[RMDB]
RNA sequence: GGGAACGACUCGAGUAGAGUCGAAAAAUGAUUGAUAAACUUAUUAGUUCAGUAGGGUCUGCCCUUUAUAGCUCAAGGUAAUAAUAACCGACAAAACUUCUAAAGAACUAGCUGACGAAAACUUUGUUUUAAAUCAGUUAGCAUCAAACAACUACGCCGCAUUAAGUUGGUUCGCCAACUUAAUGCGAAAAGAAACAACAACAACAAC
Reactivity to 2A3 in 0.01 (KOAc 150mM, MgCl2 10mM, bicine 150mM(pH8.5), 24C), signal-to-noise 1, nucleotides 027 to 156: a000u030g000a040u020u090g000a030u200a140a120a060c010u020u070a110u010u210a080g040u060u030c060a000g030u000a000g080g010g000u000c030u070g000c000c000c000u050u180u060a130u090a000g000c010u060c150a110a040g070g000u000a070a020u070a100a010u090a040a170c010c010g040a030c050a000a140a010a080c000u080u040c010u200a100a000a000g010a060a060c000u000a010g000c010u000g000a000c010g000a000a000a080a000c000u160u260u300g040u060u040u040u070a000a030a000u030c000a000g000u010u040a000g020c000a030u050c050a030a190a000c070a030a010c030u120a010c100g010c000